This 177-nucleotide RNA was probed chemically with DMS and 2A3. The reactions ran in a buffer of 150 mM KOAc, 10 mM MgCl2 and 150 mM bicine (pH 8.5), at 24 C.

RNA sequence: GGGAACGACUCGAGUAGAGUCGAAAAGAUGCCAUCCGCCGUCAAGCGUUGGCGUCUCGCUUGCGGGGCGCGGCGUGAGCCGCGACCGCGUGCGGAGACGAAAAAUCGCAAUCCGCGGCGACGUCGACGUGGACUAUCAGUUCGCUGAUAGUCCACGAAAAGAAACAACAACAACAAC
Reactivity to DMS in 0.01 (KOAc 150mM, MgCl2 10mM, bicine 150mM(pH8.5), 24C), signal-to-noise 3, nucleotides 027 to 126: g000a080u020g010c040c030a170u010c090c030g020c010c060g010u010c190a130a210g000c000g050u000u000g020g020c020g000u000c000u000c000g000c000u010u010g000c010g000g010g010g060c010g020c000g020g010c000g000u010g010a300g010c000c000g020c000g020a180c000c000g000c000g000u000g000c010g030g020a040g000a030c000g000a010a040a060a050a070u000c010g010c040a120a090u000c170c230g010c010g000g020c270g000a050c090g000u000c060g000a180
Reactivity to 2A3 in 0.01 (KOAc 150mM, MgCl2 10mM, bicine 150mM(pH8.5), 24C), signal-to-noise 2, nucleotides 027 to 126: g020a020u140g080c020c020a050u050c030c050g000c000c010g090u090c040a110a060g000c010g030u040u070g070g010c000g010u000c000u000c010g000c010u000u160g020c000g020g020g120g300c010g000c000g000g000c050g000u110g030a030g010c020c000g020c000g010a010c010c000g000c000g000u010g030c020g140g080a010g010a050c010g030a160a030a010a020a050u110c030g000c040a040a050u020c070c030g000c000g040g000c010g010a040c030g070u050c040g060a080